An RNA of 177 nucleotides, treated with 2A3 and DMS and read out base by base.
For DMS the reverse transcriptase was MarathonRT.
The RNA was probed in 150 mM KOAc, 10 mM MgCl2 and 150 mM bicine (pH 8.5) at 24 C.
For DMS, 696 sequencing reads were counted.
The 2A3 profile rests on 830 reads.
Source: RMDB library OK2TST, as collected in RNAgym.

[RMDB]
RNA sequence: GGGAACGACUCGAGUAGAGUCGAAAAAUAAAGAUGCCGUGCUCAGCAAGCCAAGACUGUGGAUCUACGGCAUCGCCACCGCCUGGAUGAACCUCAAAGUGGAGGUGAACGCCAGUAGAGAAACCACACGUGUGCAUGUGUUCGCACAUGCACACGUAAAAGAAACAACAACAACAAC
Reactivity to 2A3 in 0.01 (KOAc 150mM, MgCl2 10mM, bicine 150mM(pH8.5), 24C), signal-to-noise 1, nucleotides 027 to 126: a000u220a070a060a010g050a030u000g000c000c000g000u020g010c040u000c010a000g060c040a100a090g150c020c110a090a080g050a190c000u010g050u060g060g030a110u000c050u090a000c000g000g000c020a000u000c000g000c000c000a040c010c040g040c000c020u050g090g000a070u070g060a100a020c010c000u000c010a140a200a140g210u130g270g000a000g000g000u000g000a030a000c000g030c030c010a000g010u110a010g010a010g000a000a050a010c000c020a000c000
Reactivity to DMS in 0.01 (KOAc 150mM, MgCl2 10mM, bicine 150mM(pH8.5), 24C), signal-to-noise 1, nucleotides 027 to 126: a070u010a100a040a050g010a010u000g010c000c020g010u000g040c190u000c010a120g000c070a070a120g030c030c220a100a050g000a040c080u010g010u000g010g000a050u000c060u010a070c070g000g010c010a020u010c000g000c100c040a100c040c040g020c110c020u000g000g010a130u000g000a110a100c010c010u030c000a040a150a070g010u000g020g010a010g010g000u000g010a130a110c230g010c000c000a030g010u000a070g000a100g000a120a090a130c020c050a010c110